Chemical mapping of a 207-nucleotide RNA with DMS and 2A3. Values cover nucleotides 27 to 156.
RNA sequence: GGGAACGACUCGAGUAGAGUCGAAAAGUUGUGUAACUUCAUUUACAUGAAUUGAAACAAAUUUAAUACAAGUGGAUGUAGGAUAACCGUCCGUCCUUUACAUUGGUAUAAAAGUGAUCUAAAAUUCGGCAGGGACGAGUCUUCGGACUCGUCCCAAACUUAGUAAUAGGUUCGCCUAUUACUAAGUAAAAGAAACAACAACAACAAC
Reactivity to DMS in 0.01 (KOAc 150mM, MgCl2 10mM, bicine 150mM(pH8.5), 24C), signal-to-noise 1, nucleotides 027 to 156: g030u000u000g010u010g000u000a050a030c060u000u000c070a090u000u010u010a040c040a120u010g000a060a070u010u000g000a170a230a190c070a070a050a110u000u000u010a100a110u000a090c010a060a110g020u020g000g010a070u000g030u000a010g020g000a070u010a040a130c070c160g000u000c030c070g020u010c020c010u000u000u000a070c020a050u010u020g020g050u000a040u000a040a060a050a140g000u000g000a080u010c050u000a050a070a080a200u000u000c080g020g000c070a180g030g040g070a040c000g030a040g000u000c010u000u010c300g030g010a040c000u000c010g020u000c030c000c010a000a010
Reactivity to 2A3 in 0.01 (KOAc 150mM, MgCl2 10mM, bicine 150mM(pH8.5), 24C), signal-to-noise 1, nucleotides 027 to 156: g040u060u020g000u020g000u120a140a030c070u120u030c020a110u090u060u200a000c030a030u140g090a110a070u010u060g050a090a000a020c060a020a070a070u160u090u110a160a060u140a110c010a010a040g060u060g030g010a080u050g070u140a050g000g010a040u030a120a160c000c030g010u030c010c000g040u020c010c010u040u080u080a030c010a030u010u180g080g010u050a000u080a050a010a010a030g090u060g080a040u010c030u120a060a060a060a060u170u040c030g050g040c040a110g000g020g000a020c000g010a000g000u010c010u010u030c090g060g000a000c030u000c010g000u040c040c010c000a000a000
DMS adducts were read by reverse transcription with MarathonRT. Source: RMDB library M2RFPK, as collected in RNAgym. The reactions ran in a buffer of 150 mM KOAc, 10 mM MgCl2 and 150 mM bicine (pH 8.5), at 24 C.